About this RNA:
Conditions: 150 mM KOAc, 10 mM MgCl2 and 150 mM bicine (pH 8.5), 24 C. The record gives the reactivity of an RNA of 177 nucleotides to DMS and 2A3.
RNA sequence: GGGAACGACUCGAGUAGAGUCGAAAAGGACUUUUCCCUAGGGUUUGAGCGGUCGAACCCAGGGGGAGUGUGAUCCAGGUACCGCCGUAGAAACUGGAUUACGACGCCUACCCGGGAUUCAAACCCGCAGGUAGUACUUGUUCGCAAGUACUACCUGAAAAGAAACAACAACAACAAC
Reactivity to DMS in 0.01 (KOAc 150mM, MgCl2 10mM, bicine 150mM(pH8.5), 24C), signal-to-noise 2, nucleotides 027 to 126: g010g010a070c030u000u010u000u010c010c010c010u010a090g000g000g010u000u010u000g010a090g030c210g010g000u000c050g010a070a060c010c010c000a090g000g000g020g000g000a020g010u010g010u010g000a010u000c000c000a010g010g000u000a160c090c030g000c040c110g040u010a110g010a090a140a160c000u000g000g000a040u010u000a000c010g000a040c080g010c030c020u000a140c010c010c000g000g010g000a090u010u000c040a000a080a110c000c000c010g010
Reactivity to 2A3 in 0.01 (KOAc 150mM, MgCl2 10mM, bicine 150mM(pH8.5), 24C), signal-to-noise 2, nucleotides 027 to 126: g040g000a070c000u070u000u040u190c000c010c000u020a180g000g000g030u010u020u030g020a030g050c090g060g090u100c030g050a060a040c000c000c000a000g000g000g010g020g000a020g010u090g000u010g030a010u040c020c020a020g000g030u040a040c000c100g060c070c010g150u110a040g070a080a300a010c020u010g000g020a030u000u000a010c090g040a020c050g010c010c010u080a190c020c000c010g010g000g000a070u110u040c020a060a000a030c010c000c010g000

Values are in units of 0.01, from 0 to 300, in steps of 10. The DMS profile rests on 1,517 reads. For 2A3, 1,700 sequencing reads were counted. DMS (dimethyl sulfate) methylates the pairing face of unpaired adenines and cytosines. As a SHAPE reagent, 2A3 marks flexible, mostly unpaired nucleotides at the ribose 2'-OH. Values cover nucleotides 27 to 126.